Overview:
An RNA of 207 nucleotides, treated with DMS and 2A3 and read out base by base. Conditions: 150 mM KOAc, 10 mM MgCl2 and 150 mM bicine (pH 8.5), 24 C. For DMS, 1,832 sequencing reads were counted. For 2A3, 1,720 sequencing reads were counted. It was measured as part of the RMDB library M2RFPK.

[RMDB]
RNA sequence: GGGAACGACUCGAGUAGAGUCGAAAAGAUCUGCGCCGAUCCGAAACGCUAGCAAACAGCCCGCAUCAUGUCGUCUCCUAACUUCGAAGUGGUGAAAUACUGAGCUUAUGCGAGUAAGCCUGUUAGCAAUAGAUCAGAACGUUCGCGUUCUGAUCAAACCUUGACUGAGGUUCGCCUCAGUCAAGGUAAAAGAAACAACAACAACAAC
Reactivity to DMS in 0.01 (KOAc 150mM, MgCl2 10mM, bicine 150mM(pH8.5), 24C), signal-to-noise 1, nucleotides 027 to 156: g000a090u010c000u000g010c030g040c030c010g010a110u030c010c010g020a080a060a070c060g000c000u000a070g000c060a030a090a080c080a190g000c000c030c000g000c070a080u000c050a110u010g010u000c010g000u000c010u030c010c000u000a090a040c130u010u000c090g010a060a110g010u000g000g030u000g010a120a040a130u000a070c060u000g010a080g020c000u000u000a060u000g020c240g010a180g040u000a060a090g000c000c010u010g000u010u010a130g040c040a040a120u010a110g000a040u020c000a010g000a060a000c000g010u000u000c300g060c010g030u000u000c000u000g010a010u010c000a020a030
Reactivity to 2A3 in 0.01 (KOAc 150mM, MgCl2 10mM, bicine 150mM(pH8.5), 24C), signal-to-noise 3, nucleotides 027 to 156: g020a050u000c000u080g030c020g010c040c020g030a050u060c020c040g050a090a050a010c050g020c040u020a000g020c070a060a020a160c010a040g030c000c000c000g020c030a050u070c010a010u060g070u110c010g050u000c020u010c030c000u090a090a070c060u100u100c090g080a110a020g030u020g090g000u090g040a060a060a000u120a050c040u030g010a010g000c000u020u020a010u050g070c020g000a030g130u020a040a000g000c010c040u040g020u070u080a010g060c040a090a140u080a150g000a000u000c000a010g010a000a000c000g010u010u020c120g030c020g110u010u010c010u000g000a000u000c000a000a000